Chemical mapping of a 177-nucleotide RNA with DMS. Values cover nucleotides 27 to 126. The data come from the RNA Mapping Database (RMDB), library OK2TRN.
[RMDB]
RNA sequence: GGGAACGACUCGAGUAGAGUCGAAAAACUGGGUACUAGGUUUUGUGAAGGCUGACUCGGUCUACAAGACCUUACCCAUAGACUACUAGUCGACUAGACCGAGUUAGCCUUUAGUCAUUAGUGGUCACUACAGGUUUCUAUUCGUAGAAACCUGUAGAAAAGAAACAACAACAACAAC
Reactivity to DMS in 0.01 (KOAc 150mM, MgCl2 10mM, bicine 150mM(pH8.5), 24C), signal-to-noise 5, nucleotides 027 to 126: a110c060u000g000g000g000u010a030c060u000a050g000g010u000u000u000u010g020u000g010a020a020g000g010c000u000g010a010c000u000c010g000g000u010c000u000a010c030a060a300g000a020c010c080u000u000a040c070c020c100a090u000a040g000a060c080u000a060c140u000a080g000u000c000g000a270c300u000a010g020a010c000c010g000a030g000u000u000a010g000c000c000u000u000u000a010g010u000c060a060u010u000a020g010u000g000g000u000c040a240